[RMDB]
RNA sequence: GGGAACGACUCGAGUAGAGUCGAAAAUGGUGGGCGUCGGGUGGGGCGAGUAUCUCAACGCGGUUCCCGGUUCGGCCGCCUUGUUCGCCUGGGGGCUAAACCAGCUGGUCUUUCUGGGGCUCAGACCGCUGUGGCUAGUAUUCGUACUAGCCACAGCAAAAGAAACAACAACAACAAC
Reactivity to 2A3 in 0.01 (KOAc 150mM, MgCl2 10mM, bicine 150mM(pH8.5), 24C), signal-to-noise 3, nucleotides 027 to 126: u170g010g010u060g050g010g050c050g050u040c050g030g020g060u150g010g050g000g000c060g010a020g040u080a170u040c100u020c020a070a040c060g000c040g010g050u060u100c000c000c020g000g030u050u050c070g020g000c020c000g010c000c000u020u070g070u050u070c030g040c000c010u060g030g000g000g050g000c030u050a080a010a040c010c000a030g020c030u090g030g060u040c010u000u040u040c040u090g040g000g000g000c020u010c090a050g020a060c020c020
Reactivity to DMS in 0.01 (KOAc 150mM, MgCl2 10mM, bicine 150mM(pH8.5), 24C), signal-to-noise 1, nucleotides 027 to 126: u030g040g020u020g000g030g010c050g000u070c110g010g000g010u040g010g000g030g030c070g020a060g000u070a040u000c080u060c020a070a090c170g000c010g010g000u010u000c030c010c030g000g010u020u020c130g010g040c030c010g020c070c030u000u020g000u030u020c240g000c000c030u030g000g000g020g040g060c070u020a030a090a080c080c070a030g000c050u030g010g010u000c000u000u000u020c010u000g010g000g000g020c050u000c050a040g000a060c060c030